Background
Source: RMDB library TTRDEL, as collected in RNAgym. An RNA of 177 nucleotides, treated with 2A3 and DMS and read out base by base. DMS (dimethyl sulfate) methylates the pairing face of unpaired adenines and cytosines. For 2A3 the reverse transcriptase was SuperScript II with manganese. The RNA was probed in 150 mM KOAc, 10 mM MgCl2 and 150 mM bicine (pH 8.5) at 24 C. DMS adducts were read by reverse transcription with MarathonRT.
RNA sequence: GGGAACGACUCGAGUAGAGUCGAAAAGAUAUGGACCGAAGUAGGGAGACGGCUCGGAAACGAGUGCGUCGAGGAUCUACCGGUCCUAAGUCAAAUCGAAUGCUAUCGUUCGCGAUAGCAUUCGAAAGCAUAAACUUAGGUUCGCCUAAGUUUAUGCAAAAGAAACAACAACAACAAC
Reactivity to 2A3 in 0.01 (KOAc 150mM, MgCl2 10mM, bicine 150mM(pH8.5), 24C), signal-to-noise 8, nucleotides 027 to 126: g020a020u070a040u140g000g000a010c010c000g040a300a050g020u010a010g010g020g030a030g010a000c000g010g000c010u000c010g010g050a080a050a030c010g010a010g040u300g300c010g000u000c000g010a060g000g020a020u000c000u010a010c020c010g010g000u000c000c000u010a060a010g030u010c040a030a020a160u030c000g000a010a000u010g000c000u000a000u010c000g050u090u070c300g000c000g160a000u000a010g000c000a000u000u000c000g000a000a000a000
Reactivity to DMS in 0.01 (KOAc 150mM, MgCl2 10mM, bicine 150mM(pH8.5), 24C), signal-to-noise 7, nucleotides 027 to 126: g010a050u000a300u010g000g010a010c000c000g000a120a150g010u000a010g000g000g010a070g010a020c000g000g000c010u000c000g010g010a100a100a190c000g010a010g010u000g010c000g020u000c010g000a070g010g010a040u010c010u000a010c020c010g000g000u000c000c000u000a000a060g010u010c040a090a120a170u000c000g000a020a000u000g000c000u000a000u000c000g010u000u010c230g020c010g010a020u000a010g000c000a000u000u000c000g000a010a030a110